[RMDB]
RNA sequence: GGGAACGACUCGAGUAGAGUCGAAAACUUAAGAGCGCUGGAACGCGUCUGUCGCUCGCAAUAGCCUUCAUCGCUUGAUGCUUUUGACCACGGAUGUACUGGCACUGGUAGGAAAGCGAUGAUCAGGGUAUCAGAUUUACUUCGGUAAAUCUGAUACAAAAGAAACAACAACAACAAC
Reactivity to 2A3 in 0.01 (KOAc 150mM, MgCl2 10mM, bicine 150mM(pH8.5), 24C), signal-to-noise 4, nucleotides 027 to 126: c010u070u080a160a010g000a010g000c030g000c040u040g010g050a140a060c070g040c080g300u020c030u010g050u050c010g000c000u010c000g000c010a060a170u080a140g050c020c000u010u020c000a010u010c000g010c020u020u020g010a020u060g020c000u070u040u020u030g150a290c000c020a070c080g140g070a160u250g070u240a130c030u010g000g000c010a000c000u010g030g020u010a030g030g160a070a010a000g000c000g010a000u000g000a030u080c050a020g080g030
Reactivity to DMS in 0.01 (KOAc 150mM, MgCl2 10mM, bicine 150mM(pH8.5), 24C), signal-to-noise 3, nucleotides 027 to 126: c060u010u010a090a140g000a020g020c010g010c030u010g020g010a060a140c230g010c150g020u010c010u000g020u000c000g000c010u000c020g010c300a070a070u010a080g010c050c030u010u010c000a020u000c000g010c000u000u000g000a300u000g000c000u020u000u000u000g000a190c000c020a030c160g000g040a150u010g010u000a110c160u000g010g010c000a020c010u000g000g000u020a010g000g010a120a020a020g010c010g000a000u000g010a020u000c140a080g010g000
The data come from the RNA Mapping Database (RMDB), library RFMREP. Structure probing data (2A3 and DMS) for a 177-nucleotide construct. High DMS reactivity at an A or C suggests that its Watson-Crick edge is free. Values are in units of 0.01, from 0 to 300, in steps of 10. The DMS profile rests on 2,893 reads. For 2A3, 4,740 sequencing reads were counted. DMS adducts were read by reverse transcription with MarathonRT.